[RMDB]
RNA sequence: GGGAACGACUCGAGUAGAGUCGAAAAAGUGUUAAUCAAUAUUUAGUAUGAGAGGCAAUCAGAGGGCGCUAUCAUGCAAACUAGGAUUGUCUGCUCAUGCACAGAACCAACUACCGAUAACUAACAGGAUCUGUAUUCUGUUCGCAGAAUACAGAUCAAAAGAAACAACAACAACAAC
Reactivity to 2A3 in 0.01 (KOAc 150mM, MgCl2 10mM, bicine 150mM(pH8.5), 24C), signal-to-noise 2, nucleotides 027 to 126: a000g060u100g050u110u060a070a060u150c040a070a100u110a160u220u200u220a100g000u000a010u000g010a020g010a000g020g000c010a020a000u000c000a000g010a000g120g030g010c020g000c010u090a240u300c070a030u280g010c000a000a000a040c010u000a000g030g000a010u010u010g010u000c000u010g000c020u000c010a010u010g000c000a000c000a000g070a020a030c030c000a040a060c040u110a070c000c000g100a090u040a140a110c060u010a060a030c030a060g060
Reactivity to DMS in 0.01 (KOAc 150mM, MgCl2 10mM, bicine 150mM(pH8.5), 24C), signal-to-noise 1, nucleotides 027 to 126: a050g010u050g000u000u010a050a170u020c020a050a050u000a070u000u010u000a120g000u000a020u000g000a000g000a020g070g000c000a000a020u000c010a050g020a030g000g010g010c300g000c000u000a020u010c140a150u010g020c010a030a300a150c000u020a030g000g000a000u000u000g000u000c000u000g010c000u000c000a000u060g000c070a020c300a110g020a120a120c040c070a030a060c100u000a050c020c020g030a050u010a050a080c130u000a090a120c230a080g000